[RMDB]
RNA sequence: GGGAACGACUCGAGUAGAGUCGAAAACAUCAUCCCUUCGGGGAUGAUGAAAGAUCGAAAGAUCAGGCUUACCGUAUUAAGCCAAAAUACGAGCGAAACGCAAAAGACCUGUGUUCGCACAGGUCAACAUAACGACGCAGUUCGCUGCGUCGUUAUGAAAAGAAACAACAACAACAAC
Reactivity to 2A3 in 0.01 (KOAc 150mM, MgCl2 10mM, bicine 150mM(pH8.5), 24C), signal-to-noise 2, nucleotides 027 to 126: c000a000u020c000a000u000c000c000c000u010u030c200g040g000g000g000a000u000g000a000u000g010a000a030a000g020a000u010c010g030a040a060a030g010a010u030c020a000g080g000c010u020u010a040c040c080g120u070a080u060u090a100a010g010c010c000a020a030a020a030u140a020c090g010a030g080c050g060a260a060a040c100g010c080a070a080a030a010g010a000c000c000u000g010u010g020u030u080c200g060c060a010c000a010g000g000u000c000a000a010
Reactivity to DMS in 0.01 (KOAc 150mM, MgCl2 10mM, bicine 150mM(pH8.5), 24C), signal-to-noise 2, nucleotides 027 to 126: c000a020u000c010a000u000c000c000c000u000u000c220g010g000g020g000a020u000g000a000u000g010a040a050a060g010a010u000c000g010a150a130a200g000a000u000c000a180g000g030c030u000u010a080c110c100g020u000a070u000u010a030a070g080c040c010a120a000a040a040u010a070c130g030a110g000c000g010a070a060a100c150g020c130a070a090a100a100g000a000c000c000u000g010u000g000u000u000c160g020c010a000c000a000g000g010u000c000a000a050